[RMDB]
RNA sequence: GGGAACGACUCGAGUAGAGUCGAAAACAGCAAGUGCAGCAAUCGCAAGUAUCGACAAAUUUCUAGCGAGACCCGAUACUCGUUCUACCUGGCCUUUGGUUACACACCAGACGAACAGGUAGCCAUCCAUACGAAGCGAAUUCGUUCGCUUCGUAUGAAAAGAAACAACAACAACAAC
Reactivity to 2A3 in 0.01 (KOAc 150mM, MgCl2 10mM, bicine 150mM(pH8.5), 24C), signal-to-noise 4, nucleotides 027 to 126: c020a010g060c040a030a110g060u090g100c040a050g000c030a080a100u140c080g020c060a040a040g020u020a020u040c010g050a040c120a030a150a030u070u120u000c050u060a040g040c000g080a030g030a080c040c010c000g020a020u020a030c040u050c050g080u160u010c010u010a010c000c000u000g040g000c010c010u020u010u030g030g010u100u220a140c170a000c000a000c110c000a000g010a060c050g020a170a040c000a000g000g020u000a000g000c000c020a040u010c020
Reactivity to DMS in 0.01 (KOAc 150mM, MgCl2 10mM, bicine 150mM(pH8.5), 24C), signal-to-noise 5, nucleotides 027 to 126: c070a090g020c090a070a050g030u000g000c080a080g000c080a090a080u010c110g010c040a060a040g000u000a030u000c030g010a050c150a070a100a120u000u010u000c040u000a130g020c110g020a030g010a090c140c050c030g000a060u010a050c040u000c060g010u000u000c000u000a010c010c000u000g000g020c050c100u010u000u000g010g000u000u000a120c300a110c210a050c010c010a010g010a020c070g010a050a070c010a010g000g010u000a010g010c300c070a060u000c090